The record gives the reactivity of an RNA of 177 nucleotides to 2A3 and DMS.
[RMDB]
RNA sequence: GGGAACGACUCGAGUAGAGUCGAAAACACCGAUAUUACGUGGCGGUGCAUGCCGUGCGGGUCCAAAAGCUCAAUCUCAGCGAGGACGCAAGUCCGGCUUUUCUGGGAUUCAAUCUUUUCCAGCAUACUCAUAUACCGCUUUCGAGCGGUAUAUGAGAAAAGAAACAACAACAACAAC
Reactivity to 2A3 in 0.01 (KOAc 150mM, MgCl2 10mM, bicine 150mM(pH8.5), 24C), signal-to-noise 2, nucleotides 027 to 126: c050a030c000c020g030a070u070a040u250u170a120c130g030u080g110g010c010g000g020u050g050c070a050u170g030c000c020g010u010g020c000g020g010g050u030c060c000a000a080a010a000g000c020u010c060a030a030u000c010u010c040a010g000c010g040a060g010g000a010c000g000c030a100a040g020u000c010c030g020g020c130u090u060u030u020c020u010g040g030g020a020u080u030c020a020a120u090c020u020u070u040u020c020c010a000g020c030a060u120a230
Reactivity to DMS in 0.01 (KOAc 150mM, MgCl2 10mM, bicine 150mM(pH8.5), 24C), signal-to-noise 3, nucleotides 027 to 126: c120a170c020c030g000a090u010a090u000u010a110c210g030u000g000g020c040g000g000u000g010c120a090u010g000c050c020g030u000g000c040g000g000g020u010c080c120a040a050a070a100g030c240u000c170a030a060u000c030u000c020a030g000c080g010a100g010g000a010c020g010c220a060a140g010u010c050c000g000g010c140u010u000u010u000c020u000g010g000g010a030u010u000c190a090a120u000c050u000u000u000u000c010c010a050g020c110a100u010a170
Record summary:
The RNA was probed in 150 mM KOAc, 10 mM MgCl2 and 150 mM bicine (pH 8.5) at 24 C.